[RMDB]
The record gives the reactivity of an RNA of 177 nucleotides to 2A3 and DMS. 2A3 adducts were read by reverse transcription with SuperScript II with manganese. The RNA was probed in 150 mM KOAc, 10 mM MgCl2 and 150 mM bicine (pH 8.5) at 24 C.

RNA sequence: GGGAACGACUCGAGUAGAGUCGAAAAAUCACGAGAUGACAGAGCUAGUAGACACCGGCCCUGGUAAUACGAGCUAUGCGCUGGUCUGAGUGUCUUAUGCGACACUCAGAAUAGAGCGCGAUACAGAGUUAAUACUUAAUUUCGAUUAAGUAUUAACAAAAGAAACAACAACAACAAC
Reactivity to 2A3 in 0.01 (KOAc 150mM, MgCl2 10mM, bicine 150mM(pH8.5), 24C), signal-to-noise 9, nucleotides 027 to 126: a000u120c080a060c120g130a100g070a190u160g060a060c080a080g130a020g020c010u050a010g020u030a020g060a060c050a030c090c010g070g000c030c010c010u040g020g000u020a020a010u040a030c040g020a010g010c030u060a080u190g000c010g000c010u040g030g070u000c000u000g000a000g000u000g010u010c010u080u300a260u300g110c100g010a000c000a000c000u000c000a000g000a000a000u040a020g190a000g000c000g000c000g010a010u010a030c040a010g140a000
Reactivity to DMS in 0.01 (KOAc 150mM, MgCl2 10mM, bicine 150mM(pH8.5), 24C), signal-to-noise 8, nucleotides 027 to 126: a080u030c080a090c110g000a100g000a090u010g010a110c130a080g000a090g010c030u010a050g020u010a040g010a160c180a070c030c030g000g000c030c020c020u010g010g010u000a050a150u000a030c060g000a060g020c050u010a090u030g010c000g010c000u000g000g000u000c000u000g000a010g010u000g000u000c000u010u050a090u060g010c160g010a010c010a000c000u000c000a000g000a010a040u010a060g010a030g010c000g010c000g010a080u050a050c140a080g000a210